An RNA of 177 nucleotides, treated with 2A3 and DMS and read out base by base.
Source: RMDB library TTRDES, as collected in RNAgym.
The reactions ran in a buffer of 150 mM KOAc, 10 mM MgCl2 and 150 mM bicine (pH 8.5), at 24 C.
2A3 adducts were read by reverse transcription with SuperScript II with manganese.
RNA sequence: GGGAACGACUCGAGUAGAGUCGAAAAGAUAUGGAGCGUACUGUAGGGAGCUCCGUGUCGGAAACGACAUGGGAGCAUCGAUCUAUUACGCUCCUAAGUCAAAGUGGUAAGCUUCGGCUUACCACAACAACUAUUAAGUCUUCGGACUUAAUAGUUGAAAAGAAACAACAACAACAAC
Reactivity to 2A3 in 0.01 (KOAc 150mM, MgCl2 10mM, bicine 150mM(pH8.5), 24C), signal-to-noise 9, nucleotides 027 to 126: g010a000u020a000u060g000g000a000g010c010g000u030a030c120u230g090u120a040g040g060g130a160g020c000u000c000c000g000u000g000u000c000g000g000a010a010a000c010g030a000c020a020u150g300g050g010a010g000c000a040u300c160g100a070u010c010u020a030u040u040a010c000g000c000u000c000c000u000a010a000g000u010c040a130a060a120g000u000g000g010u010a010a000g010c020u050u210c300g110g000c000u020u000a000c000c000a010c000a000a000
Reactivity to DMS in 0.01 (KOAc 150mM, MgCl2 10mM, bicine 150mM(pH8.5), 24C), signal-to-noise 9, nucleotides 027 to 126: g010a010u000a060u010g000g000a010g010c000g020u000a020c300u010g010u000a010g010g000g000a120g020c000u000c000c000g000u000g010u000c000g010g000a020a010a040c010g010a010c000a000u000g020g050g000a010g020c010a180u010c250g000a100u000c010u000a030u000u000a000c000g010c000u000c000c000u000a000a060g000u000c010a110a120a130g020u000g000g010u000a010a010g010c000u000u020c270g020g010c010u000u000a000c000c000a000c010a050a120